[RMDB]
RNA sequence: GGGAACGACUCGAGUAGAGUCGAAAACGCUGGGUCCCAUAGGCUAAGUGUAUGGAGCUGAAGCGCGCACGGCUAUGAAGUACACGAUGCCUACGGGACCUGUGCUGAAGCGCGCACGGCAACCGAAAGGUGCGAAAGGGUUGUUUCGACAACCCAAGUUGUUCCUAAUAUUCGUAUUAGGAACAACAAAAGAAACAACAACAACAAC
Reactivity to 2A3 in 0.01 (KOAc 150mM, MgCl2 10mM, bicine 150mM(pH8.5), 24C), signal-to-noise 9, nucleotides 027 to 156: c050g010c040u070g000g000g000u020c000c000c010a010u010a000g030g010c050u170a210a040g000u000g000u000a010u020g030g020a020g010c010u020g030a210a040g020c020g000c000g000c020a020c030g010g000c000u050a300u300g020a030a000g010u020a000c010a010c010g050a080u300g000c000c000u000a000c000g000g000g000a000c000c000u000g000u010g000c020u060g040a130a030g000c000g000c000g000c010a010c010g040g000c030a070a050c010c010g070a100a050a030g030g010u050g020c050g090a150a070a070g070g000g000u000u010g010u010u100u080c120g050a030c020a030a050c000c010c000a000a020
Reactivity to DMS in 0.01 (KOAc 150mM, MgCl2 10mM, bicine 150mM(pH8.5), 24C), signal-to-noise 2, nucleotides 027 to 156: c080g030c050u000g030g020g010u000c000c000c010a030u000a010g000g030c000u000a160a300g010u000g010u000a020u010g000g000a060g000c010u000g010a110a050g020c020g020c030g030c010a300c060g010g030c000u010a180u010g000a160a290g020u010a030c000a050c000g000a220u000g020c000c000u000a020c000g010g020g020a000c000c000u000g000u000g010c040u010g010a110a060g020c030g000c020g040c000a210c020g030g020c050a060a090c000c020g000a160a150a100g010g030u000g000c000g010a080a100a110g020g030g010u000u010g010u000u000u000c070g000a130c040a020a050c000c000c000a000a060